[RMDB]
RNA sequence: GGGAACGACUCGAGUAGAGUCGAAAAUAGGACUUUGUUGACUAGAGGCACAUUGGAACCAGAAAAUUUCAAUAGUGUCACUAGAUUGAUGUGUAACUUAGGUCCUGACAUAUUUUUAAGUAUGUGCCAAACCCCAGGUUCGCCUGGGGUAAAAGAAACAACAACAACAAC
Reactivity to DMS in 0.01 (KOAc 150mM, MgCl2 10mM, bicine 150mM(pH8.5), 24C), signal-to-noise 5, nucleotides 027 to 129: u040a000g000g020a000c000u030u010u010g030u030u040g010a130c000u000a000g010a030g000g030c000a010c020a020u000u000g020g050a010a040c050c100a270g050a080a070a090a170u030u040u000c010a000a010u030a080g090u010g050u000c000a000c010u020a020g020a100u020u030g030a050u020g030u070g020u010a030a030c090u010u030a020g040g010u010c010c000u000g020a050c010a020u010a000u050u020u060u060u040a050a190g000u000a010u040g010u030g040c040c030a020a150
Reactivity to 2A3 in 0.01 (KOAc 150mM, MgCl2 10mM, bicine 150mM(pH8.5), 24C), signal-to-noise 4, nucleotides 027 to 129: u100a000g010g000a000c020u010u050u200g050u080u130g000a070c000u000a000g010a060g030g000c000a010c000a000u010u010g000g000a020a000c040c000a050g260a050a160a030a020u000u000u000c000a000a000u030a120g000u000g010u010c050a010c000u010a020g040a110u030u130g070a110u110g100u100g050u190a020a030c010u030u020a000g010g030u000c000c000u000g000a020c000a000u010a000u000u000u010u000u000a160a040g030u010a010u000g000u020g080c000c000a060a070
The record gives the reactivity of an RNA of 170 nucleotides to DMS and 2A3. 2A3 adducts were read by reverse transcription with SuperScript II with manganese. The RNA was probed in 150 mM KOAc, 10 mM MgCl2 and 150 mM bicine (pH 8.5) at 24 C. It was measured as part of the RMDB library 15KLIB. DMS adducts were read by reverse transcription with MarathonRT.